[RMDB]
RNA sequence: GGGAACGACUCGAGUAGAGUCGAAAAGUGAGGGCUUCCUCCACGCCGGCGACAACGUGGCUUCUGACAACGGCUGCGCCUUUCUUAUCAAGGGAGGGGGGCGCAUUUGCCACAACAUGAUAUGCGGCCCUGGGGAUGUGCCCCCAAAGCCUUACCACGGGUAGUCAAGUUUCGACUUGACUACCCGAAAAGAAACAACAACAACAAC
Reactivity to 2A3 in 0.01 (KOAc 150mM, MgCl2 10mM, bicine 150mM(pH8.5), 24C), signal-to-noise 1, nucleotides 027 to 156: g040u060g060a120g000g000g000c060u040u020c050c040u090c000c010a000c060g030c000c000g020g030c020g060a050c050a230a010c070g000u000g000g000c000u060u060c020u240g070a040c030a080a000c050g210g060c020u140g000c080g090c040c010u000u090u060c010u050u210a300u190c140a120a030g100g000g000a000g040g000g030g000g000g000c000g000c020a000u090u050u130g000c000c020a010c000a010a100c050a070u210g030a000u180a030u180g050c000g000g190c000c120c000u030g000g000g010g000a050u130g030u160g050c000c010c000c000c010a020a020a020g040c030c000u020u070a040c040c010a040

The data come from the RNA Mapping Database (RMDB), library OK3TST.
Structure probing data (2A3) for a 207-nucleotide construct.
The RNA was probed in 150 mM KOAc, 10 mM MgCl2 and 150 mM bicine (pH 8.5) at 24 C.